[RMDB]
RNA sequence: GGGAACGACUCGAGUAGAGUCGAAAAAGUGGACGAUACAUUACACCGAGCAAUUAAAUUACCGUCCACGCUCGGGCAUUAUUCUGGCGAGAGCCAGUUCACAGACAGCUAGCGAAAGGAAGGACCUAGCAGGAAGGAAGGAGCUAGCGCUAGGCCAAUUUACGGUAUACUUCGGUAUACCGUAAAUAAAAGAAACAACAACAACAAC
Reactivity to DMS in 0.01 (KOAc 150mM, MgCl2 10mM, bicine 150mM(pH8.5), 24C), signal-to-noise 3, nucleotides 027 to 156: a060g060u000g020g000a040c010g040a090u000a050c160a080u010u010a080c070a190c070c040g010a180g000c060a090a110u000u000a040a100a140u000u000a060c020c010g020u000c010c000a030c070g010c050u000c020g010g010g000c030a090u000u000a100u010u000c020u010g020g030c030g030a290g000a280g040c010c010a040g020u000u010c080a080c060a090g020a110c060a120g010c030u000a100g000c010g000a090a050a100g030g000a100a070g010g010a090c050c000u000a050g000c000a090g010g020a070a090g000g000a090a130g000g010a120g010c010u000a030g000c030g000c060u000a040g030g020c020c040a060
Reactivity to 2A3 in 0.01 (KOAc 150mM, MgCl2 10mM, bicine 150mM(pH8.5), 24C), signal-to-noise 5, nucleotides 027 to 156: a000g020u030g010g000a030c050g040a070u080a130c090a110u130u120a070c090a050c050c040g010a010g000c030a070a170u150u180a210a070a070u110u070a170c040c030g000u010c020c000a000c010g000c000u000c000g010g020g000c020a020u110u190a060u210u130c010u000g000g010c010g000a050g010a000g030c000c010a000g010u100u110c080a050c020a040g140a040c020a010g020c020u030a020g000c040g130a100a040a040g050g050a070a070g030g020a070c000c010u010a020g010c010a000g050g030a060a020g030g010a010a040g020g020a050g010c000u020a000g020c020g000c020u020a020g010g060c020c010a020
Structure probing data (DMS and 2A3) for a 207-nucleotide construct. For DMS the reverse transcriptase was MarathonRT. As a SHAPE reagent, 2A3 marks flexible, mostly unpaired nucleotides at the ribose 2'-OH.